[RMDB]
RNA sequence: GGGAACGACUCGAGUAGAGUCGAAAAGCUCUGGCUAUCGGUGGGGGCGGUGUCAUUGUGGAAGAUCCGGGCAGCAUAGCCAAGACCGUUGAGGUGAUCGCCAAGGCCAAGGAACAACUCGAUCAGCUCGUUAGUGUUAAUUCGUUAACACUAACGAAAAAGAAACAACAACAACAAC
Reactivity to DMS in 0.01 (KOAc 150mM, MgCl2 10mM, bicine 150mM(pH8.5), 24C), signal-to-noise 8, nucleotides 027 to 126: g000c030u010c050u000g020g010c040u000a060u000c080g020g030u000g010g010g010g010g020c060g010g020u010g010u000c070a100u010u010g020u000g020g010a120a100g000a080u010c040c080g000g000g010c050a080g010c110a050u000a090g010c020c030a060a100g010a100c050c050g010u000u000g010a110g000g010u000g000a060u000c080g000c060c040a050a120g010g000c020c050a060a100g000g010a060a040c100a050a090c100u010c050g000a060u010c060a100g000c140
Reactivity to 2A3 in 0.01 (KOAc 150mM, MgCl2 10mM, bicine 150mM(pH8.5), 24C), signal-to-noise 4, nucleotides 027 to 126: g020c010u010c040u050g050g000c010u040a030u110c060g070g010u080g050g040g010g000g020c030g000g010u030g030u010c060a100u050u160g070u090g080g030a090a040g040a100u000c040c010g000g000g000c010a020g010c020a080u070a050g000c000c010a000a010g030a020c030c000g050u040u090g040a030g000g040u040g010a050u070c040g000c040c010a020a030g040g000c030c000a020a070g020g000a080a060c020a030a060c040u010c040g060a130u050c040a010g070c040
The record gives the reactivity of an RNA of 177 nucleotides to DMS and 2A3. The DMS profile rests on 13,995 reads. For 2A3 the reverse transcriptase was SuperScript II with manganese.